[RMDB]
RNA sequence: GGGAACGACUCGAGUAGAGUCGAAAAUAACAAUUGGAAAUAUAUGUACUUUACGGAGGAGGGCGUGUACAAUCUGUUUAUGAACGAUUAUCACAACGGCUGUCCGUUUAUUAUGGGCAAUACUAUGUUGAAAUCGUUGACGCGCAAAAACGAAAACCUUCAGAAUAUAAUUCGUUAUAUUCUGAAGAAAAGAAACAACAACAACAAC
Reactivity to 2A3 in 0.01 (KOAc 150mM, MgCl2 10mM, bicine 150mM(pH8.5), 24C), signal-to-noise 3, nucleotides 027 to 156: u090a010a010c050a010a100u100u100g070g040a060a110a010u130a030u020a060u120g020u040a070c050u040u080u060a040c060g030g000a030g000g040a010g030g030g010c030g000u020g010u020a030c050a020a070u090c060u080g100u050u180u090a130u120g100a030a000c000g000a000u010u030a190u230c010a010c010a080a080c070g050g010c020u010g000u000c010c000g040u020u040u030a080u010u070a010u070g000g000g010c000a010a010u060a160c040u070a050u170g030u070u100g050a010a030a000u010c020g010u010u030g030a050c050g000c000g020c060a050a070a010a000a020c000g200a000a300a010a010c100
Reactivity to DMS in 0.01 (KOAc 150mM, MgCl2 10mM, bicine 150mM(pH8.5), 24C), signal-to-noise 2, nucleotides 027 to 156: u020a080a080c060a060a160u000u020g000g000a050a110a150u000a100u010a060u000g020u000a050c020u010u010u010a200c040g010g030a110g000g000a080g040g050g010c040g000u000g010u000a070c050a070a090u010c090u010g020u000u000u000a110u020g010a070a020c000g010a060u000u000a150u000c030a040c040a010a080c090g020g020c040u000g030u000c000c010g070u000u000u010a080u020u000a040u010g000g010g000c000a040a070u040a010c020u000a070u000g000u000u000g000a040a040a030u000c000g010u000u010g010a240c050g050c060g020c020a080a060a070a090a030c040g010a060a070a080a130c190